[RMDB]
RNA sequence: GGGAACGACUCGAGUAGAGUCGAAAACGCGCGCAGAACCGGUACAAGCGGGUGAAGCUCGGACAGAUCGUGGUCGGGGCGGCACUGCCGGUGGUGGCCGCGCUGUCGGCGCCGGCGGUGGUCACCACCACGUCAUGGUGUUCGCACCAUGACGUGGAAAAGAAACAACAACAACAAC
Reactivity to 2A3 in 0.01 (KOAc 150mM, MgCl2 10mM, bicine 150mM(pH8.5), 24C), signal-to-noise 1, nucleotides 027 to 126: c010g010c020g000c010g000c020a040g010a120a030c040c010g030g030u070a100c080a110a100g060c070g020g050g000u030g090a080a000g040c020u000c060g090g010a010c020a030g170a130u210c110g070u200g130g070u040c110g020g000g000g020c000g010g000c030a010c030u030g000c000c040g000g050u020g020g220u080g050g010c010c030g030c030g060c050u070g070u130c010g040g050c010g030c050c000g000g040c000g070g040u040g040g040u000c030a050c040c010a000
Reactivity to DMS in 0.01 (KOAc 150mM, MgCl2 10mM, bicine 150mM(pH8.5), 24C), signal-to-noise 2, nucleotides 027 to 126: c110g020c050g020c070g000c050a110g010a160a080c070c030g000g000u000a080c160a110a120g000c070g020g010g010u000g000a090a120g010c040u000c050g010g020a060c050a060g000a090u000c150g010u010g010g020u010c030g020g010g000g010c040g010g000c010a040c020u000g000c030c020g000g020u010g000g000u000g010g030c010c030g020c080g030c080u010g020u010c040g020g000c040g010c090c020g000g010c020g010g040u010g010g010u010c010a030c020c010a130

An RNA of 177 nucleotides, treated with 2A3 and DMS and read out base by base. The 2A3 profile rests on 2,006 reads. The data come from the RNA Mapping Database (RMDB), library OK2TRN.